An RNA of 177 nucleotides, treated with 2A3 and DMS and read out base by base.
[RMDB]
RNA sequence: GGGAACGACUCGAGUAGAGUCGAAAAAGCCGAGUACGCUCGGCAACGGAUCUGGGAGAGCUUGGAGCAGGCUAACAGAGUAACAUUCUGGGGCUGAAAAGCUGGGAGAGUGACCUUGAUCUACAAAUAGAAUCGGAGUAUUCGUACUCCGAUUCUAAAAAGAAACAACAACAACAAC
Reactivity to 2A3 in 0.01 (KOAc 150mM, MgCl2 10mM, bicine 150mM(pH8.5), 24C), signal-to-noise 3, nucleotides 027 to 126: a000g000c000c000g000a010g010u030a050c230g010c110u000c010g000g010c010a010a010c030g010g000a010u010c010u040g000g010g000a200g000a010g080c010u020u050g040g010a040g040c030a040g030g000c010u030a200a090c020a000g020a000g020u070a090a060c030a120u050u010c000u010g010g000g050g000c010u010g030a060a110a040a100g030c030u030g000g050g050a240g000a000g010u070g040a030c000c000u030u020g000a020u000c000u030a050c060a070a110a040
Reactivity to DMS in 0.01 (KOAc 150mM, MgCl2 10mM, bicine 150mM(pH8.5), 24C), signal-to-noise 3, nucleotides 027 to 126: a120g020c000c000g000a030g000u010a130c240g060c010u000c040g000g000c000a040a000c180g010g030a070u020c030u000g000g030g010a060g040a170g010c020u000u000g010g010a050g010c030a140g010g000c000u000a050a090c020a000g020a020g000u040a090a130c210a110u060u010c000u000g010g000g000g000c020u000g010a120a150a090a110g000c020u010g050g030g000a240g000a080g030u020g000a300c010c010u000u010g020a100u000c010u010a070c190a050a100a100